Notes: Structure probing data (2A3 and DMS) for a 177-nucleotide construct. Values cover nucleotides 27 to 126. For DMS, 3,060 sequencing reads were counted. For 2A3, 4,955 sequencing reads were counted. It was measured as part of the RMDB library OK2TST. For DMS the reverse transcriptase was MarathonRT. The RNA was probed in 150 mM KOAc, 10 mM MgCl2 and 150 mM bicine (pH 8.5) at 24 C.
[RMDB]
RNA sequence: GGGAACGACUCGAGUAGAGUCGAAAAUCCUAAGCGAACAUUCAAACUUAGGAAACGUUGGCAUUUUCCUAAUAGGAAUCGCCGUCGUAGGGCGAAUCUUAAUACAACUGGGCCUAAACCUGCGGUGGAUAUUCAGUACGUUCGCGUACUGAAUAUCAAAAGAAACAACAACAACAAC
Reactivity to 2A3 in 0.01 (KOAc 150mM, MgCl2 10mM, bicine 150mM(pH8.5), 24C), signal-to-noise 3, nucleotides 027 to 126: u010c000c000u010a040a000g040c040g060a070a050c030a130u090u150c060a140a120a080c020u020u020a020g000g000a040a080a020c070g090u120u170g100g030c120a120u030u000u030u060c010c000u040a090a050u040a110g000g030a050a040u010c000g010c030c000g080u060c050g050u050a050g020g040g040c010g010a020a020u010c020u070u100a130a070u150a090c070a120a050c120u090g000g050g000c010c020u050a100a060a040c000c000u020g010c030g030g040u040g050
Reactivity to DMS in 0.01 (KOAc 150mM, MgCl2 10mM, bicine 150mM(pH8.5), 24C), signal-to-noise 4, nucleotides 027 to 126: u000c000c000u000a050a040g000c060g010a100a130c130a140u010u020c100a090a150a140c100u000u000a030g000g000a030a080a080c210g020u010u010g000g020c110a130u000u000u000u010c000c010u000a060a080u000a080g000g000a010a060u000c030g010c010c000g000u000c160g020u000a090g000g000g010c030g000a060a060u000c010u000u000a020a090u000a080c150a070a060c080u000g000g000g000c050c040u010a030a130a090c060c020u000g000c040g000g020u000g010